[RMDB]
RNA sequence: GGGAACGACUCGAGUAGAGUCGAAAAAAUAACGCCAUCCCGCUGAUCCUCCACAUACUGCCGGUGCCGCUGGUGGCGCUCCGCCUUGUCUUUUCCUCGUUCUAACGGCAGGCGAUCUACGCGGCUACCUAGGCGUAGUGUUCGCACUACGCCUAGGAAAAGAAACAACAACAACAAC
Reactivity to DMS in 0.01 (KOAc 150mM, MgCl2 10mM, bicine 150mM(pH8.5), 24C), signal-to-noise 1, nucleotides 027 to 126: a060a040u000a040a080c070g010c040c020a080u000c020c010c020g010c070u010g000a140u000c020c010u000c040c050a080c080a020u010a060c090u010g010c030c010g010g030u010g000c020c030g030c040u000g020g050u020g040g020c040g010c040u000c060c000g010c030c030u010u000g010u000c030u020u000u000u000c040c030u000c040g050u000u010c080u000a110a070c070g010g010c000a080g010g040c040g020a080u030c040u000a130c090g020c030g010g030c010u040a080